[RMDB]
RNA sequence: GGGAACGACUCGAGUAGAGUCGAAAAAAGAUAUGGACUUCGCUACCCACCCUAUGAGAAGUCCGAGGAUCUAGAAUCGGAAACGAUUCUAGGGAGGACUUCCAUAGGAGGCGAAGUCCUAAGUCAACAGUAUCUUACACUUCGGUGUAAGAUACUGAAAAGAAACAACAACAACAAC
Reactivity to DMS in 0.01 (KOAc 150mM, MgCl2 10mM, bicine 150mM(pH8.5), 24C), signal-to-noise 3, nucleotides 027 to 126: a090a110g020a150u020a150u000g000g000a000c000u000u000c000g000c040u000a120c030c010c010a300c070c010c000u000a010u000g000a140g000a010a010g010u000c000c010g010a090g010g020a020u000c000u000a000g010a010a000u000c000g010g000a120a090a210c000g000a000u000u000c000u000a000g000g000g020a010g020g000a030c010u000u000c000c000a040u010a000g000g000a070g010g000c030g000a020a000g010u000c000c000u000a010a100g010u020c120a140a180
Reactivity to 2A3 in 0.01 (KOAc 150mM, MgCl2 10mM, bicine 150mM(pH8.5), 24C), signal-to-noise 3, nucleotides 027 to 126: a020a030g260a180u290a190u180g000g010a020c010u030u020c010g050c000u210a300c010c040c030a040c000c000c000u010a000u010g220a250g010a300a010g000u000c010c000g020a300g000g020a000u010c000u000a000g000a000a000u000c000g030g050a050a030a030c010g000a000u000u020c000u000a000g010g000g010a000g030g000a010c000u000u000c000c010a000u010a000g010g000a010g000g010c000g020a010a000g000u020c000c000u020a000a010g060u030c040a050a050